[RMDB]
RNA sequence: GGGAACGACUCGAGUAGAGUCGAAAACUCUUUUACUCGGCAUGAUACCACCGUUAUCGGGUCAACAGAGUAGUUGCAAAUGACAACAAUGCUCAGGGUUAUGCUCUCGCUUCCUAAUGGCGGUGCGCGGACGACUCAAUGUUCGCAUUGAGUCGAAACCGCCUUCUAUAUUCGUAUAGAAGGCGGUAAAAGAAACAACAACAACAAC
Reactivity to 2A3 in 0.01 (KOAc 150mM, MgCl2 10mM, bicine 150mM(pH8.5), 24C), signal-to-noise 5, nucleotides 027 to 156: c010u010c020u050u090u030u140a100c090u070c020g030g000c050a060u170g020a070u090a100c000c020a010c000c020g090u070u030a050u080c030g020g000g010u020c020a020a030c050a030g030a010g010u060a020g010u020u050g040c060a070a210a300u190g070a120c010a030a000c010a060a210u090g010c020u000c040a020g080g020g020u120u110a040u160g000c000u000c010u030c030g050c040u100u070c030c040u110a120a070u080g020g010c020g000g000u040g000c050g000c040g040g030a060c010g000a000c000u000c000a000a010u020g010u040u070c160g000c100a000u000u000g000a000g000u000c000g010a010a010
Reactivity to DMS in 0.01 (KOAc 150mM, MgCl2 10mM, bicine 150mM(pH8.5), 24C), signal-to-noise 2, nucleotides 027 to 156: c020u000c030u000u020u010u000a080c040u000c010g020g000c020a080u000g020a140u010a070c050c010a130c010c010g020u000u000a060u000c070g030g000g010u010c020a060a130c060a080g010a020g020u000a060g010u000u020g000c010a060a080a180u010g000a130c010a050a060c020a060a070u000g040c020u000c030a150g010g030g010u000u010a060u010g000c020u010c030u000c040g000c020u000u000c020c020u010a040a110u000g010g010c000g010g010u010g000c050g010c110g000g000a110c000g000a000c000u000c020a010a000u000g020u000u010c270g020c010a010u000u000g010a040g000u000c000g010a010a040